[RMDB]
RNA sequence: GGGAACGACUCGAGUAGAGUCGAAAAGUGGGUGCACGUGUGGUGAGGCACCUGGUUCACUGUGUAGCCUGUAGGAGUGUGAGGAGUGAGGUCGGGAUGUACCUCGUGUCCUUGGGGCAUCCUGUCCAAGUAGAUAAAUUUUCGAAUUUAUCUACUUAAAAGAAACAACAACAACAAC
Reactivity to 2A3 in 0.01 (KOAc 150mM, MgCl2 10mM, bicine 150mM(pH8.5), 24C), signal-to-noise 9, nucleotides 027 to 126: g110u090g010g020g000u030g030c030a010c110g090u130g050u090g090g100u090g040a130g010g040c010a020c000c000u010g010g040u060u070c040a030c080u040g020u020g030u130a030g050c010c020u040g050u060a050g020g080a060g020u110g010u040g040a040g020g010a050g020u080g030a040g000g020u030c020g010g020g010a020u030g030u150a270c000c000u010c010g040u060g040u030c030c000u030u080g020g000g010g000c000a010u020c000c000u010g010u000c020c020
Reactivity to DMS in 0.01 (KOAc 150mM, MgCl2 10mM, bicine 150mM(pH8.5), 24C), signal-to-noise 9, nucleotides 027 to 126: g020u000g010g010g020u000g010c030a050c080g010u000g020u000g010g020u000g010a120g010g010c030a040c030c030u000g010g010u000u000c050a070c060u000g010u010g010u000a100g010c030c020u000g010u000a080g010g010a070g010u000g010u000g000a080g000g010a140g010u000g010a070g010g010u000c020g010g000g000a050u000g010u000a090c010c010u000c100g010u000g000u010c040c050u000u010g010g000g000g000c020a030u000c010c010u000g010u000c040c050
Structure probing data (2A3 and DMS) for a 177-nucleotide construct. For DMS, 151,519 sequencing reads were counted. The 2A3 profile rests on 36,108 reads. The RNA was probed in 150 mM KOAc, 10 mM MgCl2 and 150 mM bicine (pH 8.5) at 24 C.